[RMDB]
RNA sequence: GGGAACGACUCGAGUAGAGUCGAAAAACAUUCCAACCUAUUUACAUAUUGAGGAAUGUGUCAAUCAAGACUAUCUCAUAUGUGACAUUGUGGAGGAAGUACUUCCAUGCGGAAAUCAAACAGGAAGAUACUUCAUAAGUUUCGACUUAUGAAGUAUAAAAGAAACAACAACAACAAC
Reactivity to 2A3 in 0.01 (KOAc 150mM, MgCl2 10mM, bicine 150mM(pH8.5), 24C), signal-to-noise 9, nucleotides 027 to 126: a000c020a120u030u000c010c010a030a030c050c000u020a050u050u040u030a000c000a010u040a030u080u230g010a020g030g130a170a170u260g100u040g010u150c020a060a210u140c080a220a080g010a010c010u020a050u070c000u000c000a000u010a000u010g010u010g010a020c030a130u060u100g070u170g060g010a010g010g000a020a020g030u040a050c010u020u000c010c010a070u110g060c070g070g170a080a130a130u210c070a080a070a070c020a040g050g000a020a020g030
Reactivity to DMS in 0.01 (KOAc 150mM, MgCl2 10mM, bicine 150mM(pH8.5), 24C), signal-to-noise 9, nucleotides 027 to 126: a080c080a140u000u000c000c000a050a280c030c020u000a030u000u000u000a020c010a010u000a010u010u010g010a040g010g010a110a070u010g010u010g010u000c010a080a140u010c300a130a110g000a020c010u000a110u000c010u000c000a020u000a010u000g010u000g000a010c290a040u000u000g010u010g010g020a300g000g000a020a030g010u000a180c040u000u000c000c010a060u000g010c080g000g000a080a090a100u010c090a030a030a040c050a040g000g000a030a040g010